RNA sequence: GGGAACGACUCGAGUAGAGUCGAAAAUGCGAAGCGCCUACGCGGGGAAAUCAGUCCACUGGACUGAUUUCUGAUCCCGCUUCGAUGCGUUGGAUAAUGCGAUAAAAUGAAAAGCCGGAGCAUUCCAAGGUACCUACGGAUUCGUCCGUAGGUACCUAAAAGAAACAACAACAACAAC
Reactivity to DMS in 0.01 (KOAc 150mM, MgCl2 10mM, bicine 150mM(pH8.5), 24C), signal-to-noise 1, nucleotides 027 to 126: u010g010c060g000a300a240g000c110g000c100c040u010a100c060g000c040g020g000g000g000a030a000a000u000c010a020g010u000c000c010a090c300u010g010g000a000c000u010g010a010u000u000u000c010u000g000a100u060c000c010c010g020c040u000u010c110g000a060u000g030c030g010u000u010g000g010a040u010a140a040u000g020c040g010a130u000a060a060a090a070u010g010a070a030a110a110g040c020c100g040g010a300g010c050a040u000u000c040c050a060